Chemical mapping of a 177-nucleotide RNA with DMS. Conditions: 150 mM KOAc, 10 mM MgCl2 and 150 mM bicine (pH 8.5), 24 C. For DMS the reverse transcriptase was MarathonRT. The DMS profile rests on 1,412 reads.
RNA sequence: GGGAACGACUCGAGUAGAGUCGAAAAGAUAUGGACGCAUAUGGACAUGUUCAUGGCCAUUCUUACGGUUCGGAAACGAACCCAGUAAGAAUGGCCAUGAACAACAGCCAUGAUGCGUCCUAAGUCAGCUAUGUGCUAACUUCGGUUAGCACAUAGCAAAAGAAACAACAACAACAAC
Reactivity to DMS in 0.01 (KOAc 150mM, MgCl2 10mM, bicine 150mM(pH8.5), 24C), signal-to-noise 1, nucleotides 027 to 126: g000a100u000a300u010g000g010a020c010g010c000a010u000a010u000g010g000a060c150a070u010g000u000u000c000a000u000g020g000c010c000a020u000u000c000u050u000a000c000g000g000u000u000c000g020g000a110a080a300c000g010a000a000c030c010c240a080g000u000a000a000g000a020a000u000g020g000c010c000a000u010g000a000a000c010a030a060c300a160g000c000c000a000u000g000a000u000g020c000g000u000c000c010u000a000a010g020u000c050a160